Structure probing data (2A3) for a 207-nucleotide construct. The reactions ran in a buffer of 150 mM KOAc, 10 mM MgCl2 and 150 mM bicine (pH 8.5), at 24 C.
[RMDB]
RNA sequence: GGGAACGACUCGAGUAGAGUCGAAAACCUGUUAUCUGACCAAUAACAGAAUGCACCACAGCGUAAAAUCAUCUGAUUGGGAGAGUUGGUCGCACCGCCAUUUGACGAACGAACGCCAAGCCUAAGCACUACGAGUAUGUGUUCGCACAUACUCGAACACCACACCAUGCUUCGGCAUGGUGUGGUGAAAAGAAACAACAACAACAAC
Reactivity to 2A3 in 0.01 (KOAc 150mM, MgCl2 10mM, bicine 150mM(pH8.5), 24C), signal-to-noise 1, nucleotides 027 to 156: c000c000u000g020u080u000a040u000c020u000g020a050c000c000a000a020u010a000a000c010a030g110a020a150u170g000c030a020c150c030a020c030a010g040c040g030u060a020a060a060a100u030c030a050u020c000u070g140a150u030u140g020g090g000a080g030a020g070u020u140g020g000u010c040g000c010a030c000c000g020c030c020a050u090u090u150g050a070c040g030a100a050c020g030a060a030c000g080c010c050a030a000g000c050c000u040a130a000g040c040a030c130u150a060c080g000a000g000u010a010u010g010u000g000u000u110c160g000c040a030c000a000u000a020c000u010c000g000a010a000